The record gives the reactivity of an RNA of 207 nucleotides to DMS. Source: RMDB library OK3TST, as collected in RNAgym. The RNA was probed in 150 mM KOAc, 10 mM MgCl2 and 150 mM bicine (pH 8.5) at 24 C. The DMS profile rests on 2,975 reads.
RNA sequence: GGGAACGACUCGAGUAGAGUCGAAAACAUCCUACGUUAGCCUCCCCUGACUUUGUGCAGCCUCUGUGGUAUGCAGGAACUCAAAAUAUUGGGGGAGAAAUUAGACUAGGUUGGGUACUCCUCUAGGCUGAAACAUGCUUUAGAGGAUACAGUGGAGAAAUGGGGUAACAUUCGUGUUACCCCAUUUAAAAGAAACAACAACAACAAC
Reactivity to DMS in 0.01 (KOAc 150mM, MgCl2 10mM, bicine 150mM(pH8.5), 24C), signal-to-noise 2, nucleotides 027 to 156: c020a070u000c010c000u000a020c150g020u020u000a150g010c100c010u000c010c000c000c000u000g000a030c020u000u010u000g020u010g000c140a070g030c010c000u000c060u000g070u000g030g010u010a040u000g030c020a030g010g010a050a020c050u030c020a050a050a030a010u000a060u010u010g030g010g010g020g060a040g040a010a070a100u010u010a140g010a090c010u000a010g020g010u000u000g000g010g040u000a110c130u020c000c010u000c000u000a030g000g000c020u010g010a280a140a240c110a170u000g010c010u000u000u000a030g010a030g010g010a060u000a010c030a150g060u010g020g000a140g000